[RMDB]
RNA sequence: GGGAACGACUCGAGUAGAGUCGAAAAUGGUGUUCAUGAUGAAAGGUCAGGUUGGUUCGUACCCAUUAGACGGUCGGCAGACUUGUACUGAACUGAGUAAUUGUGUAGAUAACUUAACCGAUAAGACCCGUAAUGGUUUGUUCGCAAACCAUUACGGAAAAGAAACAACAACAACAAC
Reactivity to 2A3 in 0.01 (KOAc 150mM, MgCl2 10mM, bicine 150mM(pH8.5), 24C), signal-to-noise 4, nucleotides 027 to 126: u110g020g010u030g010u010u050c000a010u020g000a010u000g030a000a000a030g040g000u010c010a000g010g040u030u050g030g020u120u130c040g040u120a100c020c000c000a050u060u140a040g030a040c070g010g000u040c010g000g180c030a040g030a070c030u170u300g030u100a020c000u020g000a150a040c000u010g020a010g000u000a010a000u020u010g000u020g000u040a050g050a130u130a060a010c000u070u070a100a010c020c000g050a040u050a210a050g050a110c000
Reactivity to DMS in 0.01 (KOAc 150mM, MgCl2 10mM, bicine 150mM(pH8.5), 24C), signal-to-noise 3, nucleotides 027 to 126: u010g000g030u010g000u010u010c000a000u010g000a020u000g000a170a130a220g000g000u010c000a000g030g000u000u000g000g000u010u020c290g040u010a160c300c010c000a050u000u000a300g000a070c040g000g000u000c010g000g000c300a150g020a000c020u000u060g050u000a000c000u000g010a050a030c000u000g020a070g010u000a070a000u000u000g000u000g020u050a050g000a050u030a090a060c030u000u010a110a190c000c020g010a140u020a050a130g000a120c080

Chemical mapping of a 177-nucleotide RNA with 2A3 and DMS.
For DMS the reverse transcriptase was MarathonRT.
The data come from the RNA Mapping Database (RMDB), libraries RFM100 and RFMREP.
2A3 adducts were read by reverse transcription with SuperScript II with manganese.